The data come from the RNA Mapping Database (RMDB), library OK3TST.
An RNA of 207 nucleotides, treated with DMS and 2A3 and read out base by base.
For 2A3 the reverse transcriptase was SuperScript II with manganese.
Conditions: 150 mM KOAc, 10 mM MgCl2 and 150 mM bicine (pH 8.5), 24 C.
For DMS the reverse transcriptase was MarathonRT.
RNA sequence: GGGAACGACUCGAGUAGAGUCGAAAAAUGCCAGCACUAAAGGACCUGGUUCUUCAACUUGAACCAAGCGUCCUAGAUUUAGAUCUUUAUUGUUACGAGGAGGUGCCUCCUGAUGACAUAGAGGAGGAGUUAGUGUCGCCUCAGCAACCUUAUGCUGGACUGUAGGAAAGUUCGCUUUCCUACAGUCAAAAGAAACAACAACAACAAC
Reactivity to DMS in 0.01 (KOAc 150mM, MgCl2 10mM, bicine 150mM(pH8.5), 24C), signal-to-noise 2, nucleotides 027 to 156: a040u000g010c000c000a090g000c030a110c090u000a070a180a090g020g010a030c010c020u000g050g000u000u000c000u000u000c060a150a300c260u000u000g020a010a040c000c000a020a120g010c080g010u010c010c000u040a050g000a080u010u000u020a130g000a140u010c050u000u000u000a070u020u020g020u000u000a040c040g020a060g040g010a060g030g020u010g030c050c000u000c010c000u010g010a080u000g020a130c110a080u000a140g000a030g030g010a110g000g010a110g010u020u000a100g020u010g040u000c050g010c020c030u000c020a100g030c030a060a050c050c070u010u010a120u010g000c040u000g000
Reactivity to 2A3 in 0.01 (KOAc 150mM, MgCl2 10mM, bicine 150mM(pH8.5), 24C), signal-to-noise 4, nucleotides 027 to 156: a000u140g070c010c010a000g000c010a010c040u110a140a110a040g010g010a010c000c010u010g040g010u020u000c010u110u130c040a240a230c100u040u080g000a000a010c010c000a070a050g050c020g030u000c000c000u000a000g000a000u070u100u090a040g040a100u020c050u050u180u070a150u110u100g050u030u070a040c080g020a070g000g020a010g010g010u040g060c000c000u010c000c000u080g110a200u140g040a060c070a090u140a060g120a000g080g000a000g020g010a040g030u030u110a080g000u040g050u100c010g010c010c000u010c010a000g000c000a000a090c010c030u090u060a050u130g000c010u020g080